[RMDB]
RNA sequence: GGGAACGACUCGAGUAGAGUCGAAAAGAUAUGGAGCGGGAAAGGAGGCUAUUACACUACGCAUUUAUGUCGGAAACGACAUACUUCAAAGUGUAAUAGCUACCCACCCUUUCCACGCUCCUAAGUCGUAAAUCUACCAGUUCGCUGGUAGAUUUACAAAAGAAACAACAACAACAAC
Reactivity to 2A3 in 0.01 (KOAc 150mM, MgCl2 10mM, bicine 150mM(pH8.5), 24C), signal-to-noise 2, nucleotides 027 to 126: g040a000u120a030u300g000g010a000g010c030g000g040g000a000a000a010g000g020a010g010g000c010u010a010u010u000a000c020a010c000u120a040c190g030c070a000u000u050u010a000u010g010u000c010g000g060a030a050a080c000g020a000c010a000u010a000c000u000u030c050a300a300a120g000u000g000u000a010a000u000a000g000c000u000a000c010c030c000a070c000c000c000u000u000u020c020c020a090c040g000c010u010c000c000u000a030a020g080u030c060
Reactivity to DMS in 0.01 (KOAc 150mM, MgCl2 10mM, bicine 150mM(pH8.5), 24C), signal-to-noise 3, nucleotides 027 to 126: g000a110u000a300u010g010g000a020g000c010g020g000g000a010a000a020g000g000a230g020g000c000u000a010u000u000a000c000a010c000u000a270c300g000c210a020u000u000u000a000u020g010u000c000g010g000a180a050a220c000g030a020c000a000u000a010c040u000u010c030a140a210a040g020u000g010u010a000a000u000a000g000c000u000a000c050c060c130a300c070c000c010u000u000u000c010c010a140c000g010c000u010c000c000u000a010a050g000u010c100
Conditions: 150 mM KOAc, 10 mM MgCl2 and 150 mM bicine (pH 8.5), 24 C. The record gives the reactivity of an RNA of 177 nucleotides to 2A3 and DMS. The DMS profile rests on 2,010 reads. The data come from the RNA Mapping Database (RMDB), library TTRINS. The 2A3 profile rests on 5,807 reads.